An RNA of 207 nucleotides, treated with DMS and 2A3 and read out base by base. For DMS the reverse transcriptase was MarathonRT. Source: RMDB library OK3TST, as collected in RNAgym.
RNA sequence: GGGAACGACUCGAGUAGAGUCGAAAAUUAUUAUGAUGUCGGCCGAAAUUUGAGAACUAUUGCCUUAGGAUGAGAUCCAAACUCCUAAGCCUAUCAUUUAGGAAACACCAUCAUCAAAAUCCAAAUACCAUCUGCAUGUUCUUCUCCAGCCUUGCAACUAGUAUGCGUGAUUCGUCACGCAUACUAGAAAAGAAACAACAACAACAAC
Reactivity to DMS in 0.01 (KOAc 150mM, MgCl2 10mM, bicine 150mM(pH8.5), 24C), signal-to-noise 2, nucleotides 027 to 156: u000u010a130u010u010a090u020g000a100u000g030u020c090g000g030c020c000g010a070a070a100u000u000u020g010a070g000a080a110c050u000a100u010u010g010c060c040u000u000a080g020g010a070u000g020a110g020a140u010c110c100a070a120a100c090u000c010c000u000a020a060g010c010c030u010a190u000c030a070u000u000u010a080g010g010a090a060a100c060a030c040c020a030u010c040a080u000c040a080a070a080a110u000c060c010a050a030a090u010a070c040c020a050u010c020u000g020c030a110u010g010u000u000c050u000u000c000u000c050c000a090g000c050c050u010u000g000c050a040a180
Reactivity to 2A3 in 0.01 (KOAc 150mM, MgCl2 10mM, bicine 150mM(pH8.5), 24C), signal-to-noise 5, nucleotides 027 to 156: u100u030a010u030u050a070u080g020a030u040g020u080c050g040g030c030c000g070a080a080a080u090u080u100g060a070g010a070a050c070u080a140u110u160g020c010c000u020u020a020g000g020a030u090g030a020g020a090u080c110c000a090a040a060c030u000c020c000u010a010a010g020c000c010u110a130u110c040a070u040u060u110a040g010g000a050a110a000c050a020c040c030a030u040c000a010u010c020a050a030a060a130u040c050c020a060a050a000u080a070c020c030a050u030c020u060g010c020a020u050g040u090u040c000u060u020c020u010c030c010a040g050c020c020u050u060g030c010a030a040

Background: The RNA was probed in 150 mM KOAc, 10 mM MgCl2 and 150 mM bicine (pH 8.5) at 24 C.